[RMDB]
Structure probing data (DMS and 2A3) for a 177-nucleotide construct. Values cover nucleotides 27 to 126. The 2A3 profile rests on 1,865 reads. 2A3 adducts were read by reverse transcription with SuperScript II with manganese.
RNA sequence: GGGAACGACUCGAGUAGAGUCGAAAAACCUAUGGAUUCGUCCAUAGGUGCUGGCGCGCGGCCUUUGUCCUGUCGCGUGUGCGUGGUGGGCGUUAUACGCGCAAUAGUGACAAUUCGUUGUCACUAAACUUCAUAGUCCGUUCGCGGACUAUGAAGUAAAAGAAACAACAACAACAAC
Reactivity to DMS in 0.01 (KOAc 150mM, MgCl2 10mM, bicine 150mM(pH8.5), 24C), signal-to-noise 2, nucleotides 027 to 126: a020c000c000u000a000u000g000g000a030u000u010c200g010u000c000c000a000u000a010g000g010u000g010c100u010g010g010c050g010c050g020c040g000g020c020c090u000u000u010g020u020c070c050u000g010u010c020g010c010g040u000g040u000g020c030g040u000g000g020u010g000g010g000c030g030u000u010a060u010a050c020g010c010g030c100a100a120u000a010g020u000g010a010c000a010a040u000u020c220g010u000u000g010u000c000a000c000u000a020a070
Reactivity to 2A3 in 0.01 (KOAc 150mM, MgCl2 10mM, bicine 150mM(pH8.5), 24C), signal-to-noise 1, nucleotides 027 to 126: a000c020c000u010a020u010g030g010a010u030u090c230g030u050c060c010a000u010a010g010g000u020g000c070u060g020g000c020g000c010g040c020g030g050c000c000u090u090u130g060u000c020c020u070g030u100c010g000c010g040u040g060u080g080c030g000u030g000g140u050g030g050g000c020g010u050u130a110u040a080c040g000c000g050c000a000a050u060a020g000u010g010a000c020a010a020u040u070c190g060u060u010g000u000c000a000c000u010a160a000